[RMDB]
RNA sequence: GGGAACGACUCGAGUAGAGUCGAAAAGAUAUGGAACCAAGCAAGUUCUGAGUGGUUUAGCGAUGAAAGCUCUCGGAAACGAGAGCUGGAGCUAAACCACCAGAAUGAUGACCUUGGUUCCUAAGUCCAUAGAACAAGACUUCGGUCUUGUUCUAUGAAAAGAAACAACAACAACAAC
Reactivity to DMS in 0.01 (KOAc 150mM, MgCl2 10mM, bicine 150mM(pH8.5), 24C), signal-to-noise 4, nucleotides 027 to 126: g000a060u000a300u000g010g010a010a000c000c000a010a000g010c030a070a130g010u000u000c000u000g010a170g030u010g000g010u000u000u000a000g010c000g010a160u010g020a140a140a050g000c000u010c000u000c000g010g000a110a120a190c010g000a010g010a030g010c010u000g020g000a030g010c000u000a000a010a010c000c010a000c000c000a000g000a020a000u000g010a060u000g010a100c300c000u000u000g010g000u010u000c000c000u000a020a110g000u000c040
Reactivity to 2A3 in 0.01 (KOAc 150mM, MgCl2 10mM, bicine 150mM(pH8.5), 24C), signal-to-noise 3, nucleotides 027 to 126: g060a050u150a090u270g010g000a000a010c000c020a010a000g010c000a240a300g000u010u000c010u040g130a120g120u020g000g030u000u010u000a020g010c210g290a300u060g010a040a030a010g000c000u000c000u000c010g050g060a150a100a090c020g000a020g010a010g010c000u000g000g000a000g000c010u010a000a010a000c010c000a000c000c000a010g000a000a000u030g020a050u070g040a030c040c030u020u010g000g000u010u000c000c000u010a030a000g020u000c020

Chemical mapping of a 177-nucleotide RNA with DMS and 2A3. It was measured as part of the RMDB library TTRINS. The reactions ran in a buffer of 150 mM KOAc, 10 mM MgCl2 and 150 mM bicine (pH 8.5), at 24 C.